Record summary:
The data come from the RNA Mapping Database (RMDB), library RNAMAK. An RNA of 207 nucleotides, treated with 2A3 and DMS and read out base by base. The RNA was probed in 150 mM KOAc, 10 mM MgCl2 and 150 mM bicine (pH 8.5) at 24 C. The DMS profile rests on 7,574 reads. Values cover nucleotides 27 to 156. 2A3 is a SHAPE reagent: it acylates the 2'-hydroxyl of flexible nucleotides of all four kinds.

[RMDB]
RNA sequence: GGGAACGACUCGAGUAGAGUCGAAAAUACGUGUUCGCACGUAAAAAAAGAUAUGGAUUAGGUAAUUACAGCGUUAUCUAAGACAGUCGGAAACGAUCGAGAUAACGAACUACUGUACCACCUAAUCCUAAGUCAAAAAUGGCGAUUCGUCGCCAAACUAGGAAAAUAGAUUCGUCUAUUUUCCUAGAAAAGAAACAACAACAACAAC
Reactivity to 2A3 in 0.01 (KOAc 150mM, MgCl2 10mM, bicine 150mM(pH8.5), 24C), signal-to-noise 9, nucleotides 027 to 156: u080a010c010g000u020g040u040u100c270g030c080a020c020g010u080a080a030a010a000a000a030a070g060a030u100a030u130g000g000a000u000u000a000g000g010u030a120a070u150u010a020c000a010g010c010g000u000u000a000u000c010u040a070a100g100a110c090a050g060u020c020g040g030a080a080a050c030g020a050u130c040g020a000g000a040u000a000a000c010g020a040a030c060u170a040c000u190g000u010a020c010c050a000c010c010u000a000a000u000c000c000u000a010a000g020u000c030a020a020a010a080a130u080g000g000c000g020a020u060u060c190g050u000c000g060c000c020a020a010a010
Reactivity to DMS in 0.01 (KOAc 150mM, MgCl2 10mM, bicine 150mM(pH8.5), 24C), signal-to-noise 3, nucleotides 027 to 156: u010a010c010g030u000g010u010u000c300g090c010a010c000g050u000a000a000a050a120a070a080a100g040a110u020a260u000g000g020a040u000u000a010g000g010u000a100a070u000u000a060c030a070g010c000g020u000u010a010u000c000u000a120a110g070a120c240a080g040u000c010g020g000a130a160a150c020g010a030u000c100g010a080g000a060u000a010a000c010g000a060a150c110u000a090c020u000g000u000a020c300c110a050c000c010u000a010a000u000c010c010u000a000a060g010u030c040a030a060a060a090a130u000g000g010c000g000a070u000u000c190g000u000c010g000c000c020a000a020a090